[RMDB]
RNA sequence: GGGAACGACUCGAGUAGAGUCGAAAAGAGAGGACCUUCUUAACAUGAGAAGGAAGAAGCUUUUGCAGGUUUCAGAUGCAAAAACUGAUUUAUAGAAACAGAGGAAGUUAGGCAUUGUUACAUAUGUACAGAGAUGUGAGAGAAAGCCAUAGAUGUAUCGGUGCAUAAAUUUCGAUUUAUGCACCGAAAAAGAAACAACAACAACAAC
Reactivity to DMS in 0.01 (KOAc 150mM, MgCl2 10mM, bicine 150mM(pH8.5), 24C), signal-to-noise 3, nucleotides 027 to 156: g000a090g000a070g020g020a140c010c010u010u000c010u010u000a070a140c110a210u000g000a060g000a060a040g020g000a110a120g010a200a060g030c000u000u000u000u000g010c000a030g000g000u010u010u010c140a150g000a180u000g020c020a020a010a020a020a050c010u000g000a160u000u010u000a100u010a160g020a110a070a070c050a080g000a070g000g040a070a040g000u000u000a080g010g000c020a060u000u000g010u010u000a040c040a070u000a070u000g020u000a080c090a080g000a070g000a060u000g000u010g000a090g010a090g010a040a050a060g040c000c030a050u000a120g000a090u000g020u000a140
Reactivity to 2A3 in 0.01 (KOAc 150mM, MgCl2 10mM, bicine 150mM(pH8.5), 24C), signal-to-noise 3, nucleotides 027 to 156: g100a000g010a010g020g010a090c020c000u030u000c020u060u090a190a130c100a230u260g010a030g000a000a010g040g020a020a010g010a010a000g000c020u050u060u050u040g000c040a040g080g000u010u140u220c050a030g020a080u070g000c020a000a000a010a050a020c000u010g020a050u040u100u040a140u050a080g060a070a050a010c070a020g050a030g020g020a040a060g010u080u110a100g060g000c050a060u000u050g010u020u040a020c040a030u160a030u200g040u050a020c030a040g050a000g020a040u060g040u060g020a030g000a000g000a060a020a000g000c000c030a030u100a030g060a040u060g000u020a060

Structure probing data (DMS and 2A3) for a 207-nucleotide construct. The 2A3 profile rests on 1,828 reads. Conditions: 150 mM KOAc, 10 mM MgCl2 and 150 mM bicine (pH 8.5), 24 C.